[RMDB]
RNA sequence: GGGAACGACUCGAGUAGAGUCGAAAAAAGAUAUGGAAGAGACGAAGUUCUUUGAUCUUACACCGAGGCACAAUCGGAAACGAUUGUGUACAGUGUAAGGGAGAAUUUCUGUCUCUUCCUAAGUCAAGACUGGUAAGUAGUUCGCUACUUACCAGUCAAAAGAAACAACAACAACAAC
Reactivity to DMS in 0.01 (KOAc 150mM, MgCl2 10mM, bicine 150mM(pH8.5), 24C), signal-to-noise 2, nucleotides 027 to 126: a120a050g000a020u000a270u000g000g000a010a020g000a020g020a000c000g000a030a010g010u000u010c010u000u010u010g010a050u020c000u010u000a010c000a020c020c020g040a300g000g000c000a000c000a000a000u000c000g020g010a060a060a110c010g020a020u010u000g000u000g020u000a000c000a000g000u000g000u000a000a000g000g000g000a000g010a030a060u000u010u000c010u010g030u000c000u000c000u000u000c000c000u000a000a070g010u000c050a150a100
Reactivity to 2A3 in 0.01 (KOAc 150mM, MgCl2 10mM, bicine 150mM(pH8.5), 24C), signal-to-noise 1, nucleotides 027 to 126: a000a000g020a020u050a010u070g000g000a000a000g030a000g000a000c010g010a060a030g060u100u020c030u300u240u060g030a070u020c000u000u000a000c010a000c000c000g030a200g070g000c020a000c000a020a000u010c010g000g000a040a000a000c010g000a010u000u010g000u000g000u010a010c000a000g000u010g010u000a000a000g000g000g010a000g010a010a000u010u020u030c010u020g000u040c000u000c000u000u000c000c000u000a010a000g010u000c000a160a120